[RMDB]
RNA sequence: GGGAACGACUCGAGUAGAGUCGAAAAGAAAGAAAGGUCCCAACUCUGGGAAGGUGCCAUUCCGAGGGCCAAGAGUCUGAAUAUGAGUCACUCUGGCUGCUAUGGCCCCCUCCCAGGGCUUGGGCAAGCAGGGCCUGAGAUUCGUCUCAGGCCCUGCAAAAGAAACAACAACAACAAC
Reactivity to 2A3 in 0.01 (KOAc 150mM, MgCl2 10mM, bicine 150mM(pH8.5), 24C), signal-to-noise 1, nucleotides 027 to 126: g070a030a100a010g170a000a080a000g120g030u070c000c000c000a000a000c020u000c000u000g000g000g000a020a020g000g030u000g000c000c030a050u130u230c150c170g020a120g020g020g000c000c000a120a090g000a000g030u170c120u050g020a160a010u130a140u300g090a060g090u070c100a030c000u010c000u000g000g040c000u030g050c050u060a020u000g020g000c000c070c000c000c000u000c020c000c000a000g020g000g000c020u000u010g000g000g050c000a030a030
Chemical mapping of a 177-nucleotide RNA with 2A3. Source: RMDB library RFM100, as collected in RNAgym. Values cover nucleotides 27 to 126. For 2A3, 522 sequencing reads were counted. The RNA was probed in 150 mM KOAc, 10 mM MgCl2 and 150 mM bicine (pH 8.5) at 24 C. 2A3 adducts were read by reverse transcription with SuperScript II with manganese.